[RMDB]
RNA sequence: GGGAACGACUCGAGUAGAGUCGAAAAGAGAGUCAGUACACGAUGAGCAGAUGCUCACAUGGUCGUACUCGAGGAUCCGAUCGUACCGCUAGAUACUCAUGAUCAUGUCUAGUAUCUCAUGCAUCUCUAUACUGUCGGAAUUCGUUCCGACAGUAUAAAAAGAAACAACAACAACAAC
Reactivity to 2A3 in 0.01 (KOAc 150mM, MgCl2 10mM, bicine 150mM(pH8.5), 24C), signal-to-noise 6, nucleotides 027 to 126: g080a000g010a010g050u040c030a010g040u060a030c060a010c080g120a140u050g010a010g000c060a030g070a300u300g050c010u000c010a020c020a040u070g080g010u060c090g020u040a040c050u060c110g010a020g000g020a030u020c030c020g010a050u070c050g050u090a060c030c020g000c060u040a000g000a040u020a040c010u040c120a080u170g050a060u080c060a040u190g050u000c020u010a020g010u010a040u010c020u000c010a010u180g010c010a090u030c030u000c030
Reactivity to DMS in 0.01 (KOAc 150mM, MgCl2 10mM, bicine 150mM(pH8.5), 24C), signal-to-noise 7, nucleotides 027 to 126: g000a060g000a300g010u000c040a050g020u010a060c060a080c080g010a070u000g000a030g030c080a150g010a080u010g010c010u010c300a040c080a040u000g000g000u000c080g010u000a050c110u000c140g020a040g010g010a200u000c020c040g000a120u000c100g010u010a120c070c070g020c070u000a040g000a020u000a020c030u010c140a090u010g000a030u000c100a050u000g000u000c070u010a030g010u000a030u000c010u000c120a090u010g000c070a060u000c020u010c060

The record gives the reactivity of an RNA of 177 nucleotides to 2A3 and DMS.